[RMDB]
RNA sequence: GGGAACGACUCGAGUAGAGUCGAAAAGUUUUACUGCCAUGAAAUAGAUGAAUAAUAACACAGGUAAGAGAGAUGCUAUCUUCAUUCUUGUGAGCUUCUACAAGGCUGUUCUUGGCAUAAGCAAAGUUAUGAAAGCCAUUUCAUCCAGCCUCAUGCCCUUAUUAGGAGCGUUCGCGCUCCUAAUAAGAAAAGAAACAACAACAACAAC
Reactivity to 2A3 in 0.01 (KOAc 150mM, MgCl2 10mM, bicine 150mM(pH8.5), 24C), signal-to-noise 4, nucleotides 027 to 156: g020u030u050u070u150a070c050u040g030c030c010a080u070g060a100a080a050u080a020g060a010u080g050a090a150u160a170a070u140a180a040c030a000c020a030g050g030u080a100a040g040a010g020a010g020a120u100g240c080u120a110u140c000u080u040c020a090u100u000c010u010u010g010u000g030a020g020c030u060u010c000u050a040c020a090a050g030g000c020u010g040u010u060c050u030u040g020g000c010a020u060a080a010g010c050a110a060a020g070u210u100a070u180g060a060a020a020g060c050c040a100u020u040u080c010a010u030c010c030a000g010c000c010u040c020a010u040g030c030c010
Reactivity to DMS in 0.01 (KOAc 150mM, MgCl2 10mM, bicine 150mM(pH8.5), 24C), signal-to-noise 2, nucleotides 027 to 156: g010u010u000u010u000a050c040u000g010c060c040a130u000g000a100a120a060u000a060g000a090u000g010a160a090u000a060a020u010a050a230c040a050c040a300g020g040u000a090a090g010a220g000a080g010a110u000g040c130u010a060u000c000u000u010c050a110u000u000c040u010u000g010u000g010a190g030c020u010u010c030u000a040c040a050a050g040g020c040u000g000u000u000c000u000u000g030g000c070a080u000a050a020g040c040a020a090a130g010u000u010a040u000g020a110a120a170g000c120c050a170u000u010u000c000a030u010c070c040a200g010c010c040u000c060a040u010g000c050c060
An RNA of 207 nucleotides, treated with 2A3 and DMS and read out base by base. The DMS profile rests on 2,609 reads.